[RMDB]
RNA sequence: GGGAACGACUCGAGUAGAGUCGAAAACAACCUUCCACCUUUUCUGUCAUGCCUUGGGGACACUGAUGCAUUCUCGCAGAUCAAUGAAUGCUAGAAUUGCAGGGGAGGUUGAUGUCACCAAUGCAGAUGAUGAUAGCAUCUUCGGAUGCUAUCAUCAAAAAGAAACAACAACAACAAC
Reactivity to DMS in 0.01 (KOAc 150mM, MgCl2 10mM, bicine 150mM(pH8.5), 24C), signal-to-noise 3, nucleotides 027 to 126: c020a040a050c020c020u010u000c000c000a190c230c130u000u010u000u000c090u000g010u000c120a090u010g000c010c040u000u000g020g000g010g000a020c020a030c180u010g000a120u010g010c000a030u000u010c000u010c110g000c010a050g000a220u000c170a150a130u020g010a090a040u000g020c000u000a020g010a010a010u010u000g020c000a070g010g010g000g010a040g000g030u000u000g010a030u000g000u000c030a110c000c000a030a040u000g010c030a060g030a120
Reactivity to 2A3 in 0.01 (KOAc 150mM, MgCl2 10mM, bicine 150mM(pH8.5), 24C), signal-to-noise 2, nucleotides 027 to 126: c000a000a010c020c030u010u000c020c000a150c020c030u110u150u140u120c070u120g130u110c020a120u040g000c010c000u020u050g020g000g000g000a010c030a030c110u090g010a070u060g000c000a020u010u010c010u000c020g000c000a050g020a200u110c090a150a110u260g160a070a050u000g020c000u000a000g000a020a040u190u080g020c040a010g000g040g010g010a040g020g000u020u050g020a040u040g030u030c020a030c100c000a020a030u050g000c050a030g000a080